[RMDB]
RNA sequence: GGGAACGACUCGAGUAGAGUCGAAAAAAGCACAAGUGAGACAAGGUGGAGAGGCAAGCGGAGGUCAGAUGGUGCAGGACCUUAGAAGCCACGUUAAUGACUGUGGUCCGUACUGUAGGGAUAAUGGGGUAAUGCUCUGUUUCGACAGAGCAUUACCAAAAGAAACAACAACAACAAC
Reactivity to DMS in 0.01 (KOAc 150mM, MgCl2 10mM, bicine 150mM(pH8.5), 24C), signal-to-noise 3, nucleotides 027 to 126: a030a060g010c080a080c070a030a060g000u010g000a090g010a100c090a050a070g010g020u000g010g000a070g010a070g000g070c120a070a080g020c120g010g000a060g010g020u010c080a050g020a060u000g010g010u010g020c050a080g000g000a040c040c020u010u020a080g010a090a070g020c030c010a000c100g000u010u010a090a070u000g000a010c020u010g010u010g000g000u000c020c020g000u000a050c070u000g010u010a040g020g000g010a090u000a060a050u000g000g010
Reactivity to 2A3 in 0.01 (KOAc 150mM, MgCl2 10mM, bicine 150mM(pH8.5), 24C), signal-to-noise 2, nucleotides 027 to 126: a000a000g100c100a080c070a110a030g060u050g050a090g010a030c020a020a000g050g000u070g000g040a070g040a010g100g010c040a050a020g020c010g070g020a010g000g020u000c000a010g010a050u100g010g050u030g000c070a100g040g030a030c010c000u030u060a150g020a110a000g010c030c000a020c050g090u070u100a150a070u200g030a020c020u080g000u020g030g020u050c000c000g010u010a090c000u040g080u110a060g010g000g090a040u050a110a040u170g100g060

Structure probing data (DMS and 2A3) for a 177-nucleotide construct. The data come from the RNA Mapping Database (RMDB), library OK2TST. For DMS, 2,399 sequencing reads were counted. DMS adducts were read by reverse transcription with MarathonRT. Conditions: 150 mM KOAc, 10 mM MgCl2 and 150 mM bicine (pH 8.5), 24 C.